[RMDB]
RNA sequence: GGGAACGACUCGAGUAGAGUCGAAAAGCUUCACCACUUCCUGAUCCUUGGCAAAAGUCUUCAAGUCCUCGGGAGUAAUCCCCAGUGUGCUGAAGUUCUCCUCAAAGAAGCCCUGCAUCUCCUGGAGGUUCAUAUCCUCCGAGGGCUGCAGCAGCACCAACCCAUACCUGUUCGCAGGUAUGGGUUGAAAAGAAACAACAACAACAAC
Reactivity to 2A3 in 0.01 (KOAc 150mM, MgCl2 10mM, bicine 150mM(pH8.5), 24C), signal-to-noise 2, nucleotides 027 to 156: g000c010u020u000c020a040c020c010a000c030u050u030c000c000u000g080a090u090c030c000u050u010g020g000c050a160a100a080a070g060u080c090u070u020c040a070a010g040u000c020c060u070c100g020g000g010a020g000u070a050a180u040c030c020c000c010a030g010u000g010u000g000c090u000g010a050a010g000u080u020c040u010c030c010u100c060a100a110a050g090a070a010g010c000c040c000u000g000c000a000u010c030u000c070c000u020g000g000a000g010g000u050u010c050a030u100a070u300c000c000u000c000c010g030a060g000g000g030c010u010g010c000a000g010c010a010g000c000a010c030